Conditions: 150 mM KOAc, 10 mM MgCl2 and 150 mM bicine (pH 8.5), 24 C.
Structure probing data (DMS) for a 177-nucleotide construct.
It was measured as part of the RMDB library OK2TST.
For DMS, 780 sequencing reads were counted.
Reactivities are rounded to 0.1 and cut off at 0 and 3.
[RMDB]
RNA sequence: GGGAACGACUCGAGUAGAGUCGAAAAACAGAUCGGGACAGCACCCCUGUCCCGUUUUUAAUUUAUGCAAUGUUGGUGGGUAAAUAUGCAGUUUUUAGAGGUGCGGGAUAGAACGGGACAAAACGGGUGAUCUGACAAGUUUCGACUUGUCAGAUCAAAAAGAAACAACAACAACAAC
Reactivity to DMS in 0.01 (KOAc 150mM, MgCl2 10mM, bicine 150mM(pH8.5), 24C), signal-to-noise 1, nucleotides 027 to 126: a050c140a050g000a060u000c020g000g020g000a060c000a090g020c140a180c160c070c100c100u010g010u000c010c000c000g010u000u000u000u000u000a010a080u000u000u000a090u010g020c100a120a120u010g000u010u000g000g000u010g010g000g020u000a030a030a080u010a030u020g000c090a080g020u010u000u010u020u000a080g010a120g000g000u020g000c190g000g000g020a090u000a070g010a040a030c040g010g010g010a040c070a050a010a070a070c180g020g000g020